[RMDB]
RNA sequence: GGGAACGACUCGAGUAGAGUCGAAAACAUGGGUGCUGCGGGUCAGUUCGUCGUGUUCCGACUGCACUUGCGCGGCGAUACCGGUCAGCGUGGCCUCGAUGAAGUCGUUGACGGAGCGGGCCGACACGCAUCUCUAUGGGUUCGCCCAUAGAGAUGCAAAAGAAACAACAACAACAAC
Reactivity to DMS in 0.01 (KOAc 150mM, MgCl2 10mM, bicine 150mM(pH8.5), 24C), signal-to-noise 3, nucleotides 027 to 126: c080a070u020g010g010g010u000g030c050u010g020c020g010g000g030u000c040a050g000u010u000c060g010u000c080g010u000g020u000u020c110c020g000a060c030u000g000c050a050c030u000u000g000c070g030c000g020g010c030g010a080u010a050c070c030g000g000u010c040a080g000c040g010u000g010g020c050c020u000c040g000a100u010g000a130a110g010u000c010g010u000u010g010a050c050g000g010a200g030c070g000g000g000c010c020g010a090c090a080c130
Reactivity to 2A3 in 0.01 (KOAc 150mM, MgCl2 10mM, bicine 150mM(pH8.5), 24C), signal-to-noise 4, nucleotides 027 to 126: c040a060u130g070g040g000u090g030c010u000g010c020g010g000g080u090c020a060g030u090u080c020g030u000c020g020u030g080u150u080c080c020g060a090c030u080g040c090a050c000u050u100g030c020g000c000g010g000c000g020a010u060a100c010c010g030g080u100c040a050g040c060g080u090g060g020c010c030u080c070g090a240u140g060a060a020g050u070c050g130u130u150g010a020c010g040g000a030g040c030g000g020g000c000c020g020a020c060a020c040
The record gives the reactivity of an RNA of 177 nucleotides to DMS and 2A3. The 2A3 profile rests on 3,712 reads. For DMS the reverse transcriptase was MarathonRT. For DMS, 3,709 sequencing reads were counted. Source: RMDB library OK2TST, as collected in RNAgym.